[RMDB]
The record gives the reactivity of an RNA of 177 nucleotides to 2A3 and DMS. For 2A3, 4,928 sequencing reads were counted. For DMS the reverse transcriptase was MarathonRT. 2A3 is a SHAPE reagent: it acylates the 2'-hydroxyl of flexible nucleotides of all four kinds. Values are in units of 0.01, from 0 to 300, in steps of 10.

RNA sequence: GGGAACGACUCGAGUAGAGUCGAAAAUAUCGGUGUCCGAUUAAGCCAUGCGAGUCGUGAGGGGUUAUGCCCUCGGCGGACUGCUCAGUAACACGUGGAUAACCUGCCCAAGGGUCUGGGAUAACCCGCAUUCAUGUCUUUUCGAAGACAUGAAUGCAAAAGAAACAACAACAACAAC
Reactivity to 2A3 in 0.01 (KOAc 150mM, MgCl2 10mM, bicine 150mM(pH8.5), 24C), signal-to-noise 5, nucleotides 027 to 126: u210a030u020c030g000g020u040g070u060c030c010g010a020u110u090a060a020g020c020c000a030u110g030c030g070a030g030u050c020g020u080g070a030g010g040g000g040u190u100a060u260g090c000c000c000u020c000g010g200c020g000g010a030c010u020g020c010u020c050a030g030u090a140a030c050a020c100g050u070g000g000a030u050a110a130c000c020u030g020c020c000c000a010a050g040g000g000u030c060u070g040g030g000a040u050a070a060c010c000c000
Reactivity to DMS in 0.01 (KOAc 150mM, MgCl2 10mM, bicine 150mM(pH8.5), 24C), signal-to-noise 3, nucleotides 027 to 126: u030a060u010c080g020g040u050g010u010c040c020g020a090u010u000a040a160g010c030c100a080u030g000c050g000a110g030u010c030g020u070g020a010g020g020g000g000u030u050a080u000g000c000c000c010u000c070g010g030c060g000g010a110c020u010g030c030u060c090a020g000u010a080a110c160a070c070g000u020g000g000a080u020a040a030c040c000u010g000c010c020c030a080a130g000g020g010u010c080u020g010g000g010a150u000a090a080c040c010c050